Chemical mapping of a 177-nucleotide RNA with DMS and 2A3. The DMS profile rests on 3,046 reads. The RNA was probed in 150 mM KOAc, 10 mM MgCl2 and 150 mM bicine (pH 8.5) at 24 C. The 2A3 profile rests on 5,504 reads. The data come from the RNA Mapping Database (RMDB), library OK1LIB.
RNA sequence: GGGAACGACUCGAGUAGAGUCGAAAACGCCUCGCGCUCAAACGCAUGCAGAGCGACGCAGAGGCACACGCAGAGCCUUCCAACGCUGCGGCUUCCAGGCUGACAAACAGUGCGAGACAUCCAGAGAGAUUUUAUACCCGUUCGCGGGUAUAAAAUCAAAAGAAACAACAACAACAAC
Reactivity to DMS in 0.01 (KOAc 150mM, MgCl2 10mM, bicine 150mM(pH8.5), 24C), signal-to-noise 3, nucleotides 027 to 126: c170g010c020c010u000c010g070c020g040c000u030c080a100a140a210c130g000c090a090u010g040c240a160g010a120g000c080g000a060c100g000c130a030g000a040g000g000c000a040c020a040c090g000c030a080g000a090g010c040c020u000u010c030c060a080a150c070g010c030u000g030c060g000g000c060u000u000c120c060a050g020g010c010u000g000a060c020a060a090a080c150a030g030u040g000c060g000a040g010a120c050a050u000c000c040a100g000a220g000a230
Reactivity to 2A3 in 0.01 (KOAc 150mM, MgCl2 10mM, bicine 150mM(pH8.5), 24C), signal-to-noise 6, nucleotides 027 to 126: c080g020c000c010u010c000g020c000g000c000u050c050a160a150a060c080g020c070a040u190g030c070a030g040a020g050c020g070a090c030g010c030a030g010a030g040g050c010a010c000a000c030g060c040a030g010a040g090c000c010u090u080c060c020a100a030c030g000c050u030g010c000g030g000c010u100u020c010c010a050g080g000c010u030g040a060c040a030a110a010c010a030g040u040g060c010g020a020g010a030c040a040u050c020c020a040g040a000g010a000